[RMDB]
An RNA of 177 nucleotides, treated with 2A3 and DMS and read out base by base.
For DMS the reverse transcriptase was MarathonRT.
For 2A3 the reverse transcriptase was SuperScript II with manganese.
The RNA was probed in 150 mM KOAc, 10 mM MgCl2 and 150 mM bicine (pH 8.5) at 24 C.
RNA sequence: GGGAACGACUCGAGUAGAGUCGAAAAGUGGCAAGGUAAACCCCACCGGGAGCAAGACCGAAUAGGGAUGACACGGGGCGGGCGAAAGCCUGUUCACAGCCGGUUUCCGGGCCCGUCAUCCGGGUGGCACUUCUAAUGAGUUCGCUCAUUAGAAGUGAAAAGAAACAACAACAACAAC
Reactivity to 2A3 in 0.01 (KOAc 150mM, MgCl2 10mM, bicine 150mM(pH8.5), 24C), signal-to-noise 2, nucleotides 027 to 126: g040u020g000g040c030a030a030g060g030u100a100a070a070c020c010c020c010a030c040c040g040g030g000a050g080c070a130a040g050a060c020c010g010a050a040u130a130g020g000g060a010u010g010a000c000a010c060g000g010g010g020c040g000g010g000c020g080a060a010a010g010c000c010u020g000u090u070c080a070c010a060g000c000c000g000g000u030u040u040c040c020g000g030g000c010c010c000g010u000c010a030u000c020c010g000g030g000u040g010g020
Reactivity to DMS in 0.01 (KOAc 150mM, MgCl2 10mM, bicine 150mM(pH8.5), 24C), signal-to-noise 3, nucleotides 027 to 126: g010u000g010g000c070a110a070g010g030u000a050a110a140c070c020c010c030a120c160c060g010g010g010a050g010c100a070a090g000a080c030c010g010a100a090u010a090g010g010g010a050u000g000a030c020a090c110g000g010g000g000c010g010g000g020c000g000a090a060a140g010c000c000u000g000u000u000c040a050c100a250g010c010c000g020g010u000u000u010c030c010g010g030g000c010c020c070g000u000c010a040u000c020c000g010g020g040u000g000g000